[RMDB]
RNA sequence: GGGAACGACUCGAGUAGAGUCGAAAAGUGUUGUCGCCUGCGAAGGCGGUACCACCGACCAGACUCAGGGACAACAGGAGUAUCGAGGAAUACUUCAUAGAGAGUUUCUCUCUGUGGGGAUGACGGCCGAACUGACCAGGUUCGCCUGGUCAGUUCGAAAAGAAACAACAACAACAAC
Reactivity to 2A3 in 0.01 (KOAc 150mM, MgCl2 10mM, bicine 150mM(pH8.5), 24C), signal-to-noise 3, nucleotides 027 to 126: g060u030g020u020u040g020u000c100g140c200c000u010g030c030g020a050a000g000g000c000g000g010u050a150c000c040a040c000c010g180a250c020c030a050g060a150c000u010c040a000g030g000g000a000c000a030a000c040a040g020g060a090g020u110a130u210c070g020a100g020g130a130a020u110a170c010u000u010c000a000u020a000g000a000g010a000g030u050u220u140c050u010c000u000c000u020g000u050g000g020g000g000a020u030g060a040c030g010g020c010
Reactivity to DMS in 0.01 (KOAc 150mM, MgCl2 10mM, bicine 150mM(pH8.5), 24C), signal-to-noise 3, nucleotides 027 to 126: g010u000g000u020u000g000u000c010g000c000c000u010g000c090g050a300a170g000g000c000g000g020u010a070c170c230a110c010c010g030a180c000c000a030g000a300c170u000c030a020g000g000g030a030c000a010a000c020a020g010g010a080g000u000a050u010c050g000a130g000g000a230a050u000a060c000u000u000c000a010u000a030g010a010g000a020g000u000u020u030c050u000c000u000c010u000g000u000g000g000g000g000a070u000g000a150c070g010g000c170
Chemical mapping of a 177-nucleotide RNA with 2A3 and DMS. In probing experiments dimethyl sulfate is read out at A N1 and C N3, which are open when not base-paired. For 2A3 the reverse transcriptase was SuperScript II with manganese. DMS adducts were read by reverse transcription with MarathonRT. Conditions: 150 mM KOAc, 10 mM MgCl2 and 150 mM bicine (pH 8.5), 24 C.